This 177-nucleotide RNA was probed chemically with DMS and 2A3. Values are in units of 0.01, from 0 to 300, in steps of 10.
[RMDB]
RNA sequence: GGGAACGACUCGAGUAGAGUCGAAAACUUUUUGGAGAACUUGUGGCGGCCUACGUUGGGCUGCGUCUGGACCUUUCGGGGACCGGAUGCGGCCUGGCGGUCGGGCUGCUCUUGUUGUGCCGGAGAGCGUUGAUUGAAAAUUCGUUUUCAAUCAACGAAAAGAAACAACAACAACAAC
Reactivity to DMS in 0.01 (KOAc 150mM, MgCl2 10mM, bicine 150mM(pH8.5), 24C), signal-to-noise 2, nucleotides 027 to 126: c010u000u000u000u010u010g010g000a070g010a020a010c010u000u010g000u030g010g010c000g000g020c000c000u000a040c000g010u000u000g000g000g020c000u000g000c010g030u000c000u000g000g010a160c010c000u000u010u030c170g010g000g000g010a120c000c000g010g010a000u000g010c000g000g020c000c000u010g000g000c000g000g000u020c120g000g000g000c000u000g010c000u000c000u000u000g010u000u000g020u020g020c000c000g010g000a020g000a020g000
Reactivity to 2A3 in 0.01 (KOAc 150mM, MgCl2 10mM, bicine 150mM(pH8.5), 24C), signal-to-noise 9, nucleotides 027 to 126: c010u040u040u010u030u080g020g000a050g010a020a010c010u020u010g050u270g130g000c000g010g000c000c000u010a020c000g010u010u000g010g000g000c000u000g000c000g000u000c000u000g070g030a150c000c000u050u070u130c300g060g000g000g040a100c010c000g010g000a000u010g000c000g000g000c000c000u000g000g000c000g000g020u070c040g000g000g000c000u000g000c000u000c000u000u000g000u000u000g090u170g040c000c000g010g000a030g000a000g010